[RMDB]
RNA sequence: GGGAACGACUCGAGUAGAGUCGAAAACUUCCAGCGUUCGCGCUGGAAGAAAGGCCGAGUAGUGUUGGGUCGCGAAAGGCCAUAAAUCAACAAUCAGUCAGAAAAUCGGUAUCUUCGGAUACCGAAACAUUUGGAUUAAGUUCGCUUAAUCCAAAUGAAAAGAAACAACAACAACAAC
Reactivity to DMS in 0.01 (KOAc 150mM, MgCl2 10mM, bicine 150mM(pH8.5), 24C), signal-to-noise 6, nucleotides 027 to 126: c010u000u000c000c000a000g010c010g030u000u020c220g030c010g020c000u000g010g010a000a000g010a040a090a100g010g020c000c000g000a060g020u000a090g000u000g010u000u000g020g000g020u000c030g000c020g010a120a120a190g000g000c000c010a050u010a020a070a080u010c100a060a050c150a080a080u010c130a070g000u010c120a090g000a060a080a110a110u000c000g000g000u000a000u000c000u000u010c180g010g010a010u000a010c000c000g000a010a030a070
Reactivity to 2A3 in 0.01 (KOAc 150mM, MgCl2 10mM, bicine 150mM(pH8.5), 24C), signal-to-noise 3, nucleotides 027 to 126: c010u000u000c000c000a010g010c010g030u060u060c110g000c000g000c070u020g010g010a000a000g010a020a000a000g010g020c000c000g020a010g000u020a010g000u000g150u200u210g200g140g060u160c040g030c010g050a040a010a000g010g010c000c000a000u000a000a040a020u100c020a000a110c010a010a130u180c030a030g300u110c050a020g150a230a200a010a130u030c000g000g000u000a000u030c010u030u050c130g080g000a010u010a010c000c000g000a000a000a000
About this RNA:
Chemical mapping of a 177-nucleotide RNA with DMS and 2A3. For DMS, 7,963 sequencing reads were counted. The RNA was probed in 150 mM KOAc, 10 mM MgCl2 and 150 mM bicine (pH 8.5) at 24 C. Reactivities are given for positions 27 through 126.